[RMDB]
RNA sequence: GGGAACGACUCGAGUAGAGUCGAAAAUGUGCUAGUUGGUCUACACAAGGUUUGCACAACCGUGGCUCUUUUGAAGGAUUUAAACAAGCUGCAUCAGAAGAAAAAUGGCUAUAUGUGCAUGGACGUACGAAUAACGGACAUUCGUGUCCGUUAUUCGAAAAGAAACAACAACAACAAC
Reactivity to DMS in 0.01 (KOAc 150mM, MgCl2 10mM, bicine 150mM(pH8.5), 24C), signal-to-noise 3, nucleotides 027 to 126: u000g010u000g020c090u010a050g000u000u020g030g000u000c030u000a110c070a100c060a110a100g010g010u010u000u000g000c000a040c060a100a150c040c020g030u000g010g010c280u000c010u010u000u000u000g000a010a110g010g000a070u010u000u000a050a110a160c230a140a070g000c030u000g010c190a070u000c010a010g010a050a020g010a020a050a280a140a040u000g000g010c100u000a100u010a110u000g020u000g010c010a030u010g000g020a130c100g000u010a090
Reactivity to 2A3 in 0.01 (KOAc 150mM, MgCl2 10mM, bicine 150mM(pH8.5), 24C), signal-to-noise 1, nucleotides 027 to 126: u160g010u050g020c070u070a090g050u110u230g170g020u110c030u020a010c020a010c010a130a090g130g000u050u070u090g000c040a000c010a060a050c010c010g000u010g010g000c000u000c000u020u000u000u030g030a080a030g000g070a060u010u110u260a110a110a020c090a080a070g040c000u050g000c020a090u010c000a010g030a090a000g010a020a050a000a000a000u030g020g000c060u020a030u010a020u270g020u000g050c060a020u030g090g010a050c100g030u110a010